[RMDB]
The record gives the reactivity of an RNA of 207 nucleotides to 2A3.

RNA sequence: GGGAACGACUCGAGUAGAGUCGAAAAAUAAAACCAGUAUUUGUAGCAAGUCAAAUCCGUUUAUUACAGAACUUAACAAUAAAUUUAGUGAGAAUAAUCCGUUUAGACGAGCACAUAGCGAUGAUUAUCUUAAUAAGCAAGAACAAGAUCAUGAACACAUAGUUCCGCUGUUCGCAGCGGAACUAUGAAAAGAAACAACAACAACAAC
Reactivity to 2A3 in 0.01 (KOAc 150mM, MgCl2 10mM, bicine 150mM(pH8.5), 24C), signal-to-noise 1, nucleotides 027 to 156: a000u100a020a070a020a010c000c000a010g090u030a180u150u040u100g020u010a070g010c010a100a000g030u010c040a070a020a000u000c010c010g000u000u040u040a040u070u040a130c000a010g100a010a000c010u010u080a040a010c040a110a140u180a300a070a110u220u080u020a010g010u010g040a040g000a120a000u020a070a010u000c030c030g000u000u050u060a070g040a100c090g000a000g000c000a000c000a010u070a040g000c010g150a070u090g000a030u060u040a060u050c040u080u090a030a010u060a070a090g090c070a070a000g010a010a120c020a010a000g020a010u110c000a060u110g080a100a020c020a000
2A3 adducts were read by reverse transcription with SuperScript II with manganese. The data come from the RNA Mapping Database (RMDB), library OK3TST. Conditions: 150 mM KOAc, 10 mM MgCl2 and 150 mM bicine (pH 8.5), 24 C.